[RMDB]
RNA sequence: GGGAACGACUCGAGUAGAGUCGAAAAAGCAGGAGUACGCUCCUGCAUGGGUAGAAGAAUUGACCCCAACUGAAGUUCAAUUCUAACGUUAAAAGGAGUUUUAUAUGACUGGACGUACGCGUCCAGAUGACGAUUUCAUUCUUCGGAAUGAAAUCAACGACUACAAACUGUUCGCAGUUUGUAGUCGAAAAGAAACAACAACAACAAC
Reactivity to 2A3 in 0.01 (KOAc 150mM, MgCl2 10mM, bicine 150mM(pH8.5), 24C), signal-to-noise 1, nucleotides 027 to 156: a000g010c000a000g010g020a000g000u060a040c140g030c160u010c000c040u000g050c000a010u040g040g030g010u130a170g040a300a010g000a040a040u020u000g000a000c000c000c000c000a070a100c190u260g040a000a000g030u000u040c000a000a000u010u000c000u010a100a100c070g040u100u180a100a060a010a020g150g000a100g000u100u080u110u040a220u040a060u200g100a060c000u000g000g000a000c010g000u040a020c300g000c000g130u000c000c000a000g000a000u010g080a000c050g000a000u000u000u000c000a010u000u000c000u010u020c130g100g000a000a000u000g000a010a000a000u000c000a000a000